[RMDB]
RNA sequence: GGGAACGACUCGAGUAGAGUCGAAAAGAUAUGGAUGGGUCGCGAUAAGCUAUGAGGUCGGAAACGACCUAUAGCUUUUGACGCGACCUGUCCUAAGUCAAAAUCGAGACAGUUCGCUGUCUCGAAACGUUCUGACUGAGUUCGCUCAGUCAGAACGAAAAGAAACAACAACAACAAC
Reactivity to 2A3 in 0.01 (KOAc 150mM, MgCl2 10mM, bicine 150mM(pH8.5), 24C), signal-to-noise 2, nucleotides 027 to 126: g000a010u070a020u100g010g010a000u000g000g000g000u000c000g010c020g020a110u060a280a100g000c010u010a000u080g300a040g030g000u000c010g000g000a040a040a030c010g000a000c000c000u000a000u000a000g000c010u030u010u050u130g070a020c010g000c010g020a000c010c010u010g000u000c000c000u000a010a000g010u000c000a000a000a010a290u030c020g000a000g000a040c000a000g000u080u220c270g060c150u010g030u020c000u050c000g030a010a000a010
Reactivity to DMS in 0.01 (KOAc 150mM, MgCl2 10mM, bicine 150mM(pH8.5), 24C), signal-to-noise 1, nucleotides 027 to 126: g000a040u000a300u000g010g010a000u000g000g000g000u010c000g000c000g040a160u010a030a020g000c000u000a010u000g020a010g000g020u000c000g010g010a070a050a140c000g010a040c000c000u000a010u000a000g020c010u000u000u010u000g000a180c040g020c000g000a010c000c000u000g000u000c000c000u000a010a070g010u000c040a110a050a120a140u000c030g020a000g000a020c000a000g010u000u010c300g020c000u000g000u000c020u000c000g010a000a010a070